[RMDB]
RNA sequence: GGGAACGACUCGAGUAGAGUCGAAAAGUAUUCGUUCGACAGAAGAUUAAUGAACAACCUAUUAUGAAAGCCCUAUCCCUAGUGAUUAGCCUAGUCGUGAUUAGCGUGGUGGUGAUUAUUAUCCCACGACUAAUAUCGGGUUCGCCCGAUAUUAGUCAAAAGAAACAACAACAACAAC
Reactivity to DMS in 0.01 (KOAc 150mM, MgCl2 10mM, bicine 150mM(pH8.5), 24C), signal-to-noise 3, nucleotides 027 to 126: g020u000a110u010u000c080g000u010u000c030g010a190c110a070g000a070a100g000a140u010u000a070a070u000g000a060a050c100a060a090c070c010u000a060u000u010a080u010g010a060a080a120g010c020c010c040u010a110u000c020c010c010u000a070g010u010g010a130u010u000a070g020c020c030u000a060g020u010c020g030u000g010a090u010u000a060g010c070g030u010g000g020u000g000g010u000g020a080u010u010a060u010u000a090u000c000c000c000a050c160
Reactivity to 2A3 in 0.01 (KOAc 150mM, MgCl2 10mM, bicine 150mM(pH8.5), 24C), signal-to-noise 3, nucleotides 027 to 126: g040u020a100u050u100c060g010u030u040c030g040a020c040a070g110a130a000g030a210u090u180a150a100u190g040a040a030c000a010a020c020c020u030a080u180u020a130u190g070a120a010a000g020c000c010c020u020a070u000c010c000c000u020a030g020u010g130a100u060u090a030g010c000c010u020a020g020u040c020g020u050g070a140u020u060a010g030c030g010u030g010g050u060g040g000u020g060a020u000u120a050u100u050a050u060c000c000c000a040c040
Source: RMDB library RFMREP, as collected in RNAgym. The record gives the reactivity of an RNA of 177 nucleotides to DMS and 2A3. The 2A3 profile rests on 2,239 reads. The reactions ran in a buffer of 150 mM KOAc, 10 mM MgCl2 and 150 mM bicine (pH 8.5), at 24 C.